[RMDB]
Chemical mapping of a 170-nucleotide RNA with 2A3 and DMS. For DMS, 5,218 sequencing reads were counted.
RNA sequence: GGGAACGACUCGAGUAGAGUCGAAAAAAAAUGCUUAAGUCCAUGGCUGCAACUCGUGGAGCGACUUGCGUCAUUGGUACUACAAAGUUCUACGGUGGCUGGGAUUUCAUGCUUAAAACAUUGUACAACAGCCGUGUGUUCGCACACGGCAAAAGAAACAACAACAACAAC
Reactivity to 2A3 in 0.01 (KOAc 150mM, MgCl2 10mM, bicine 150mM(pH8.5), 24C), signal-to-noise 2, nucleotides 027 to 129: a000a000a000a020u170g000c020u000u010a000a000g000u000c020c000a020u000g030g000c010u070g000c020a010a020c000u030c100g000u120g090g150a110g070c000g050a060c020u000u000g000c040g010u000c000a080u000u160g060g010u050a000c000u060a080c010a000a090a000g000u040u000c000u030a030c020g070g010u040g000g030c000u000g000g000g000a000u120u000u000c040a020u110g020c000u050u070a000a030a000a040c060a100u080u120g030u140a020c060a150a020c000a070
Reactivity to DMS in 0.01 (KOAc 150mM, MgCl2 10mM, bicine 150mM(pH8.5), 24C), signal-to-noise 1, nucleotides 027 to 129: a020a020a010a030u070g000c110u100u000a030a060g000u010c000c040a040u000g000g020c070u070g000c020a030a050c040u000c030g030u030g050g000a210g040c040g000a030c180u000u010g010c110g010u050c010a030u000u000g080g020u140a020c020u000a060c260a080a030a070g020u040u010c120u020a080c030g000g000u030g030g050c000u050g000g000g000a050u070u010u050c140a020u020g010c000u030u060a080a000a040a270c100a000u000u000g010u060a120c180a000a000c040a020
Source: RMDB library 15KLIB, as collected in RNAgym.